An RNA of 177 nucleotides, treated with 2A3 and DMS and read out base by base. Source: RMDB library OK1LIB, as collected in RNAgym. DMS (dimethyl sulfate) methylates the pairing face of unpaired adenines and cytosines. For 2A3, 2,234 sequencing reads were counted.
[RMDB]
RNA sequence: GGGAACGACUCGAGUAGAGUCGAAAACGGAGGCCAACUACCUCGACGCACUCCAGAAGUGCUACGACGCUGGCGCUGACCCUUCGACCACGCUUGUCACCCCGACCGACAGCCGCGUGUUCGCGAGGUCGUGCAGUGUCUUCGGACACUGCACGACAAAAGAAACAACAACAACAAC
Reactivity to 2A3 in 0.01 (KOAc 150mM, MgCl2 10mM, bicine 150mM(pH8.5), 24C), signal-to-noise 3, nucleotides 027 to 126: c080g030g020a050g020g000c010c030a070a050c030u130a120c000c010u020c010g050a030c110g010c020a020c010u050c070c010a080g050a150a000g080u020g010c020u060a020c030g090a010c060g010c060u030g010g010c030g000c040u080g060a180c020c010c000u020u030c020g010a040c030c020a030c000g010c020u070u080g010u010c020a090c020c000c000c010g050a050c010c030g060a120c040a060g030c120c060g040c010g030u040g050u040u050c010g000c020g030a030g000
Reactivity to DMS in 0.01 (KOAc 150mM, MgCl2 10mM, bicine 150mM(pH8.5), 24C), signal-to-noise 1, nucleotides 027 to 126: c150g000g000a050g010g000c100c000a030a040c040u060a050c000c000u000c070g000a200c230g020c000a000c020u020c050c120a150g000a050a050g040u000g000c000u010a040c170g000a040c190g000c040u000g010g000c060g000c010u000g020a000c050c010c000u030u030c000g000a070c000c060a000c000g000c070u070u120g020u000c000a140c030c000c000c170g000a120c050c090g080a040c020a010g010c230c110g020c050g000u000g010u000u000c000g010c180g060a020g120